[RMDB]
RNA sequence: GGGAACGACUCGAGUAGAGUCGAAAACACGCUUAGUGGUGAUGUCGCAGAUGGAGAAGACAAACUCACCGCUGUCGUAGAACUGCUAGUUGAGCAGAGUAGUGAUGAUAGUGAGAGAGAACUACUAGCUGCACUGUGCGGUGAAGCAAAAGGUACCAUAGUGAGCAAAAUUCGUUUUGCUCACUAUAAAAGAAACAACAACAACAAC
Reactivity to 2A3 in 0.01 (KOAc 150mM, MgCl2 10mM, bicine 150mM(pH8.5), 24C), signal-to-noise 8, nucleotides 027 to 156: c060a010c030g030c050u110u140a020g010u030g050g020u010g010a050u080g020u040c040g020c100a050g050a240u170g120g050a140g040a200a050g040a040c050a060a110a060c030u020c020a020c010c010g000c000u020g020u050c030g010u010a050g060a140a060c010u020g010c000u010a030g050u090u080g050a010g000c010a000g020a010g020u030a000g010u010g070a100u050g030a080u060a070g080u120g040a070g010a010g010a010g020a120a010c000u040a000c000u010a030g000c000u010g000c000a010c020u050g020u030g050c020g000g040u030g020a040a000g010c030a010a040a060a060g060g020u030a040c030c000
Reactivity to DMS in 0.01 (KOAc 150mM, MgCl2 10mM, bicine 150mM(pH8.5), 24C), signal-to-noise 4, nucleotides 027 to 156: c060a070c060g000c060u000u000a060g040u010g020g010u000g020a090u010g020u000c060g010c040a130g010a120u000g030g030a180g020a130a130g000a120c080a050a090a100c070u010c000a020c010c010g010c000u000g000u010c040g010u010a100g000a110a190c010u000g010c010u000a120g010u000u000g010a150g030c030a070g020a110g030u000a090g000u000g020a150u000g010a080u000a010g010u000g020a160g010a210g020a210g010a150a080c020u000a040c020u000a200g000c010u000g020c010a090c060u000g010u000g020c040g020g020u000g010a070a080g010c010a080a050a080a080g010g000u000a050c070c080
Background: This 207-nucleotide RNA was probed chemically with 2A3 and DMS. The reactions ran in a buffer of 150 mM KOAc, 10 mM MgCl2 and 150 mM bicine (pH 8.5), at 24 C. 2A3 adducts were read by reverse transcription with SuperScript II with manganese. For 2A3, 9,734 sequencing reads were counted. It was measured as part of the RMDB library OK3TST.